[RMDB]
An RNA of 207 nucleotides, treated with DMS and 2A3 and read out base by base. For 2A3, 1,737 sequencing reads were counted. The reactions ran in a buffer of 150 mM KOAc, 10 mM MgCl2 and 150 mM bicine (pH 8.5), at 24 C. High 2A3 reactivity points to a flexible backbone, as in loops and unpaired stretches.
RNA sequence: GGGAACGACUCGAGUAGAGUCGAAAAAGCGCACGGUACGCCGUGCGCAACAAUCUGUUCGUAGUAUAGCGAAACAGGGUAAUAUAAAGAAAUGUACACUAAGAAGCGAGCCUUACGAGGCUCGCAAAAAAGUCUUUAUCGUUCGCGAUAAAGACAACCAUAAGAACAAGUUCGCUUGUUCUUAUGGAAAAGAAACAACAACAACAAC
Reactivity to DMS in 0.01 (KOAc 150mM, MgCl2 10mM, bicine 150mM(pH8.5), 24C), signal-to-noise 1, nucleotides 027 to 156: a110g000c010g000c030a010c030g020g030u010a110c290g150c020c000g020u010g010c010g030c010a010a110c070a050a070u010c020u000g010u010u000c010g010u000a130g080u000a080u000a100g030c000g000a130a060a020c000a070g000g000g030u000a060a050u000a070u000a050a030a050g000a030a040a130u000g030u000a070c050a300c150u010a080a110g000a110a170g000c000g010a010g080c000c010u000u000a080c190g030a140g030g010c010u000c000g000c010a000a000a040a060a000a000g010u000c000u000u000u000a020u010c000g010u000u000c300g030c060g000a030u000a000a010a020g010a000c010a000a030
Reactivity to 2A3 in 0.01 (KOAc 150mM, MgCl2 10mM, bicine 150mM(pH8.5), 24C), signal-to-noise 2, nucleotides 027 to 156: a000g000c000g000c010a010c000g010g000u030a020c210g030c060c000g020u000g000c000g000c000a000a000c000a000a030u020c000u010g000u010u000c030g010u010a100g030u020a140u060a050g020c010g000a160a060a010c010a010g060g020g030u060a050a090u080a040u110a200a070a030g120a050a120a010u080g020u090a010c040a010c080u140a160a020g060a140a000g120c000g000a000g000c000c000u040u030a050c160g030a020g020g000c000u010c000g000c000a020a010a000a000a000a000g000u000c010u000u000u000a000u000c010g020u030u020c120g000c010g050a000u000a000a000a000g000a000c000a000a000
Values cover nucleotides 27 to 156.